The data come from the RNA Mapping Database (RMDB), libraries RFM100 and RFMREP. An RNA of 177 nucleotides, treated with 2A3 and DMS and read out base by base. 2A3 adducts were read by reverse transcription with SuperScript II with manganese. The RNA was probed in 150 mM KOAc, 10 mM MgCl2 and 150 mM bicine (pH 8.5) at 24 C.
[RMDB]
RNA sequence: GGGAACGACUCGAGUAGAGUCGAAAAUCAGUGACUUAAUGUUUGCUUUGGAGAAUGAUAUUUUCCCUUUCCUAUAUUUGACUUUUGUUCUAAAAGUUAUUUGGAGAGAAAAGGCAUGAUUGAGGUUGAAGGUGAUAUAAUUCGUUAUAUCACCUUCAAAAGAAACAACAACAACAAC
Reactivity to 2A3 in 0.01 (KOAc 150mM, MgCl2 10mM, bicine 150mM(pH8.5), 24C), signal-to-noise 9, nucleotides 027 to 126: u110c030a020g080u030g150a030c010u010u030a010a010u100g170u120u060u020g030c020u060u040u070g010g010a020g010a050a040u100g170a100u110a160u170u010u010u070c010c000c000u010u010u010c080c030u130a130u030a050u210u070u080g010a000c000u030u030u030u040g110u260u160c100u120a010a010a010a000g000u010u010a040u030u060u050g000g000a020g000a000g000a010a110a040a030g010g000c000a010u030g010a030u040u030g020a010g050g030u030u050
Reactivity to DMS in 0.01 (KOAc 150mM, MgCl2 10mM, bicine 150mM(pH8.5), 24C), signal-to-noise 7, nucleotides 027 to 126: u000c050a150g010u010g010a130c020u000u000a030a040u010g010u010u010u000g010c010u000u010u000g010g010a050g010a020a020u010g010a190u010a300u000u000u000u000c010c010c010u000u000u000c000c000u010a050u020a050u010u010u020g010a010c010u000u000u000u000g010u020u030c140u020a010a010a020a010g010u000u000a020u000u000u000g000g000a020g000a020g010a080a060a050a060g010g000c010a010u000g000a030u000u000g000a020g010g020u000u010